[RMDB]
RNA sequence: GGGAACGACUCGAGUAGAGUCGAAAACUUGUGUUGGCACCAGGUGAUUUAAUCGCUGCGAUUAAAACCGAAUUAUCAGCGGACGGAAUACGUUUCGAAAUACGAGAGGAUGGACGGGUUCCAGCAACCUCGCUAAUAGUUUCGACUAUUAGCGAGGAAAAGAAACAACAACAACAAC
Reactivity to DMS in 0.01 (KOAc 150mM, MgCl2 10mM, bicine 150mM(pH8.5), 24C), signal-to-noise 3, nucleotides 027 to 126: c060u000u000g040u010g050u010u000g010g050c080a040c040c040a060g010g010u000g010a180u010u000u020a030a060u000c050g000c120u000g030c090g040a060u000u000a010a030a060a120c060c040g030a130a080u000u000a050u000c050a060g020c020g020g000a070c050g000g000a070a100u000a090c060g020u000u000u000c040g020a050a070a040u000a090c110g000a090g000a050g010g040a060u000g000g000a080c100g000g000g020u000u010c030c010a090g010c160a080a180
Reactivity to 2A3 in 0.01 (KOAc 150mM, MgCl2 10mM, bicine 150mM(pH8.5), 24C), signal-to-noise 2, nucleotides 027 to 126: c030u060u060g040u010g000u120u060g040g000c020a000c040c040a040g000g070u080g090a120u030u040u150a040a030u020c000g000c120u230g040c080g070a040u090u090a020a060a050a050c070c000g030a060a090u140u030a110u210c030a000g050c000g000g050a020c020g000g060a090a080u130a100c060g030u010u040u100c030g020a040a110a040u120a090c050g000a000g000a010g140g010a020u070g040g020a010c030g070g040g000u060u000c010c010a000g000c000a030a100
An RNA of 177 nucleotides, treated with DMS and 2A3 and read out base by base.
High DMS reactivity at an A or C suggests that its Watson-Crick edge is free.
For DMS the reverse transcriptase was MarathonRT.
The RNA was probed in 150 mM KOAc, 10 mM MgCl2 and 150 mM bicine (pH 8.5) at 24 C.